Notes
Structure probing data (DMS and 2A3) for a 177-nucleotide construct. For 2A3, 2,473 sequencing reads were counted. Conditions: 150 mM KOAc, 10 mM MgCl2 and 150 mM bicine (pH 8.5), 24 C. DMS adducts were read by reverse transcription with MarathonRT.
[RMDB]
RNA sequence: GGGAACGACUCGAGUAGAGUCGAAAAGAUAUGGAUGGAGAUCGCUGAACUUGUCCCUCGGAAACGAGGGCAAGAUACGAAUAAGAUCGAUGAAAUCCUAAGUCAAAGCGCAUCUUCGGAUGCGCAAUCUGAGUUCAUACUUCGGUAUGAACUCAGAAAAAGAAACAACAACAACAAC
Reactivity to DMS in 0.01 (KOAc 150mM, MgCl2 10mM, bicine 150mM(pH8.5), 24C), signal-to-noise 2, nucleotides 027 to 126: g000a010u010a210u000g000g000a010u000g000g010a210g040a010u000c000g020c230u000g020a100a120c000u000u010g010u000c000c000c000u000c000g000g000a080a100a120c010g000a000g000g010g000c000a000a000g010a160u010a080c140g010a090a170u050a070a130g010a060u000c010g000a090u010g000a160a070a060u000c000c000u000a050a080g000u000c030a040a120a120g010c000g000c000a000u000c000u000u010c220g000g040a000u000g000c000g000c000a010a010
Reactivity to 2A3 in 0.01 (KOAc 150mM, MgCl2 10mM, bicine 150mM(pH8.5), 24C), signal-to-noise 2, nucleotides 027 to 126: g020a010u020a010u100g000g010a000u010g020g010a080g000a030u000c020g000c290u210g070a150a090c030u170u080g300u300c000c000c000u010c010g010g010a010a020a030c000g000a000g010g020g010c000a000a000g000a000u050a060c050g030a030a050u240a250a070g030a110u100c060g000a140u070g050a080a050a010u030c030c020u040a060a010g030u020c030a120a000a000g000c000g000c000a020u000c040u070u090c230g070g060a000u020g000c000g000c000a000a000